[RMDB]
An RNA of 207 nucleotides, treated with 2A3 and DMS and read out base by base. The RNA was probed in 150 mM KOAc, 10 mM MgCl2 and 150 mM bicine (pH 8.5) at 24 C. Values cover nucleotides 27 to 156.
RNA sequence: GGGAACGACUCGAGUAGAGUCGAAAACAGAGCUAAUGAGCUACAUACCUACCCAAGGUGAAAGCUCCUUCUCUCGCAAUGUGUAACUCAUGAUUCUCAUGACCCCUGGUUGGAGAGAUCCGGACUAUAGACUAGAGGGUGUUCGCACCCUCUAGAACGUCUCUCUUUUGUUCGCAAAAGAGAGACGAAAAGAAACAACAACAACAAC
Reactivity to 2A3 in 0.01 (KOAc 150mM, MgCl2 10mM, bicine 150mM(pH8.5), 24C), signal-to-noise 2, nucleotides 027 to 156: c030a000g040a010g030c040u130a130a070u170g020a020g000c010u040a050c010a130u240a030c010c010u020a040c000c000c030a030a020g000g000u030g050a160a050a010g000c000u030c010c000u040u000c020u000c010u000c000g100c090a040a090u070g100u030g040u180a100a070c020u010c000a010u020g050a130u260u120c160u070c180a010u060g030a040c020c000c000c020u030g050g000u070u010g010g010a010g000a020g020a050u070c050c030g010g020a000c020u070a050u140a290g040a010c000u000a010g000a000g000g010g000u000g020u000u040c090g050c050a000c000c000c000u010c000u010a000g000a000a000
Reactivity to DMS in 0.01 (KOAc 150mM, MgCl2 10mM, bicine 150mM(pH8.5), 24C), signal-to-noise 1, nucleotides 027 to 156: c080a100g000a060g000c120u020a100a070u000g020a010g020c030u050a060c060a110u010a020c030c000u000a080c020c040c060a210a120g040g040u000g050a060a130a150g010c060u000c020c040u020u000c030u010c030u010c020g020c090a090a150u010g020u010g000u000a000a060c020u000c010a000u000g000a120u000u000c100u000c020a040u000g040a130c040c010c000c040u000g010g040u000u000g000g000a050g000a090g000a060u010c050c040g020g030a110c060u010a150u000a120g000a200c010u000a030g010a030g020g010g040u010g000u000u040c220g020c000a050c000c000c010u000c010u000a010g010a030a100